This 177-nucleotide RNA was probed chemically with DMS. Reactivities are rounded to 0.1 and cut off at 0 and 3. The data come from the RNA Mapping Database (RMDB), library RFM100. DMS adducts were read by reverse transcription with MarathonRT. The reactions ran in a buffer of 150 mM KOAc, 10 mM MgCl2 and 150 mM bicine (pH 8.5), at 24 C.
[RMDB]
RNA sequence: GGGAACGACUCGAGUAGAGUCGAAAAAAGACACAAAAAUUGUCUUGUCGCUUUAGGAUAAUGUGUUGACUCGCAGGAACUAGUUGCAAUGAACGGCGAUUAAAUUGGUCUGUUUUUUUGUUGGUUAUCGGAACGAACAAUUCGUUGUUCGUUCCGAAAAAGAAACAACAACAACAAC
Reactivity to DMS in 0.01 (KOAc 150mM, MgCl2 10mM, bicine 150mM(pH8.5), 24C), signal-to-noise 1, nucleotides 027 to 126: a000a010g000a000c050a030c130a000a070a090a120a000u000u000g000u000c020u000u000g000u030c020g000c000u000u000u000a030g000g000a190u010a110a110u030g000u000g040u000u030g040a150c050u040c010g000c010a140g030g000a100a270c030u000a000g000u000u000g000c000a200a150u030g000a070a030c150g000g000c000g000a010u030u000a120a070a120u050u020g000g020u000c000u040g000u000u000u000u000u000u000u000g000u020u000g000g000u000u020a150